[RMDB]
RNA sequence: GGGAACGACUCGAGUAGAGUCGAAAAGCUACCUCAUCAAAAAGAAGUUAGGACAAAUAGCUGUCAACAAUUGCCUUUUGCUUAUCCCUUCAGUUGAUGUGAUAAAAGAUGGUAGUUGCCCUUGACAGAACUUUAUACAGUUCGCUGUAUAAAGUUCAAAAGAAACAACAACAACAAC
Reactivity to 2A3 in 0.01 (KOAc 150mM, MgCl2 10mM, bicine 150mM(pH8.5), 24C), signal-to-noise 6, nucleotides 027 to 126: g000c010u010a020c010c010u020c000a020u010c010a010a070a040a030a040g020a040a020g020u090u120a030g020g050a090c020a020a080a040u080a050g010c020u050g070u150c050a040a050c020a120a200u120u100g030c010c010u040u040u040u040g020c020u060u050a060u120c040c030c000u030u010c040a160g020u050u030g040a020u010g050u060g050a080u160a120a120a010a010g110a040u170g010g000u000a010g010u010u010g030c010c010c040u020u080g050a030c050a050
Reactivity to DMS in 0.01 (KOAc 150mM, MgCl2 10mM, bicine 150mM(pH8.5), 24C), signal-to-noise 5, nucleotides 027 to 126: g000c020u010a010c010c000u000c020a030u010c030a020a080a090a170a100g000a050a020g010u010u000a050g010g000a100c050a020a040a070u000a080g010c050u010g020u010c110a080a110c230a100a080u010u000g000c020c020u000u000u000u010g000c120u010u000a070u000c070c150c020u000u000c030a100g010u000u000g010a020u010g000u000g010a140u000a070a050a040a100g010a060u010g000g020u000a010g010u000u000g000c030c010c020u000u000g020a060c230a110
Record summary
Source: RMDB library RFMREP, as collected in RNAgym. Structure probing data (2A3 and DMS) for a 177-nucleotide construct. For DMS, 5,266 sequencing reads were counted. 2A3 is a SHAPE reagent: it acylates the 2'-hydroxyl of flexible nucleotides of all four kinds. For DMS the reverse transcriptase was MarathonRT.